[RMDB]
The record gives the reactivity of an RNA of 170 nucleotides to 2A3 and DMS. 2A3 adducts were read by reverse transcription with SuperScript II with manganese. For DMS the reverse transcriptase was MarathonRT. The DMS profile rests on 5,692 reads. The reactions ran in a buffer of 150 mM KOAc, 10 mM MgCl2 and 150 mM bicine (pH 8.5), at 24 C. It was measured as part of the RMDB library 15KLIB.
RNA sequence: GGGAACGACUCGAGUAGAGUCGAAAACUUCGGAUGCCCAGGUCGGACCGCGAGGAGGUGGAGAUGCCAUGCCGACCCGAAGAGGAAAGAAGGACGCGAGACGCAAACCUGUGAGUGGAUCCUCGCCAUAGCAGCCCGUUCGCGGGCUGCAAAAGAAACAACAACAACAAC
Reactivity to 2A3 in 0.01 (KOAc 150mM, MgCl2 10mM, bicine 150mM(pH8.5), 24C), signal-to-noise 2, nucleotides 027 to 129: c000u050u040c020g020g000a030u070g030c000c000c000a040g060g100u030c010g030g000a100c010c000g040c000g030a010g060g000a010g000g000u020g000g000a100g000a060u210g010c050c000a040u000g050c000c000g010a020c000c000c000g040a020a000g040a000g000g050a030a020a060g010a000a000g000g010a010c020g030c000g030a120g000a000c060g020c030a100a120a040c010c000u020g000u010g070a010g050u050g000g010a040u000c000c000u040c030g040c000c000a070u040a040
Reactivity to DMS in 0.01 (KOAc 150mM, MgCl2 10mM, bicine 150mM(pH8.5), 24C), signal-to-noise 2, nucleotides 027 to 129: c160u020u030c090g010g040a120u020g050c020c030c050a060g030g060u030c010g010g050a040c040c050g010c040g010a000g090g000a020g070g000u020g000g000a020g020a020u090g050c000c030a080u080g010c000c080g030a040c040c010c120g030a050a060g040a070g080g040a030a000a000g000a070a030g020g020a040c140g050c280g050a000g080a060c090g010c000a070a040a300c080c020u010g060u000g020a110g050u020g010g030a080u040c000c010u020c050g000c000c000a160u020a110